[RMDB]
RNA sequence: GGGAACGACUCGAGUAGAGUCGAAAAUGCUGGCAGAACGCGGCACGCUGGAAGAUCCGAACCUGUUUAUUCGUCGUAUGAACCAGCUGCUGGUUUCCUGAUGUAAUGCCGGAUGACCUUCGUGUCACAAGCUAGUUGAUUUCGAUCAACUAGCUUGAAAAGAAACAACAACAACAAC
Reactivity to 2A3 in 0.01 (KOAc 150mM, MgCl2 10mM, bicine 150mM(pH8.5), 24C), signal-to-noise 5, nucleotides 027 to 126: u090g000c010u010g000g000c020a000g010a060a010c040g010c000g160g000c020a020c120g000c000u010g030g020a190a130g040a200u000c040c000g000a070a090c040c060u200g100u220u190u100a170u130u130c060g020u010c020g000u090a030u050g020a090a030c010c010a010g020c000u010g000c010u010g040g000u000u050u020c010c010u070g050a090u150g090u120a140a030u050g010c010c010g020g010a070u040g010a010c020c000u140u130c200g080u170g020u120c020a010
Reactivity to DMS in 0.01 (KOAc 150mM, MgCl2 10mM, bicine 150mM(pH8.5), 24C), signal-to-noise 5, nucleotides 027 to 126: u000g030c040u010g000g020c020a040g020a160a050c060g020c030g010g000c010a020c280g000c000u000g010g010a060a100g010a060u000c030c000g000a030a040c190c130u000g010u010u000u010a230u020u000c050g010u010c090g000u000a020u010g000a100a110c010c000a020g000c020u000g020c010u010g020g010u010u000u010c020c020u000g010a100u010g000u010a070a130u010g010c010c010g000g000a170u010g000a040c000c010u010u020c300g000u000g010u000c020a140